[RMDB]
RNA sequence: GGGAACGACUCGAGUAGAGUCGAAAACUAGGGCGACUGAUGGUGUGAGCUGGUUGAUAUGAUACUUACUAGGUGGGUUGAAGGCAACAGCGAUGACGGUAAGCAGCAGAAUUUCGACUGUUGUAAGGACCUCAUGUAAGUUCGCUUACAUGAGGUCAAAAGAAACAACAACAACAAC
Reactivity to DMS in 0.01 (KOAc 150mM, MgCl2 10mM, bicine 150mM(pH8.5), 24C), signal-to-noise 3, nucleotides 027 to 126: c040u000a060g000g010g000c050g030a060c090u020g010a030u010g000g020u020g020u010g000a080g030c020u000g010g020u010u000g000a100u050a030u020g020a130u030a060c080u000u000a050c060u010a100g010g050u000g000g000g040u030u010g010a080a060g000g000c060a030a060c040a070g060c030g030a030u000g010a170c040g030g040u050a080a120g040c000a040g060c050a070g000a090a060u000u010u000c090g000a100c060u030g000u000u000g040u070a070a120g010
Reactivity to 2A3 in 0.01 (KOAc 150mM, MgCl2 10mM, bicine 150mM(pH8.5), 24C), signal-to-noise 1, nucleotides 027 to 126: c030u080a070g000g000g010c030g050a080c010u050g040a020u110g050g020u010g000u000g040a080g010c020u050g020g050u050u000g010a040u060a080u150g030a010u040a070c040u150u030a120c110u190a040g040g000u050g030g000g050u010u020g020a020a000g030g020c000a000a000c010a040g020c030g060a060u060g010a000c100g010g050u100a040a000g070c000a000g000c020a010g110a090a100u120u050u120c090g040a160c010u000g000u050u000g000u000a000a000g150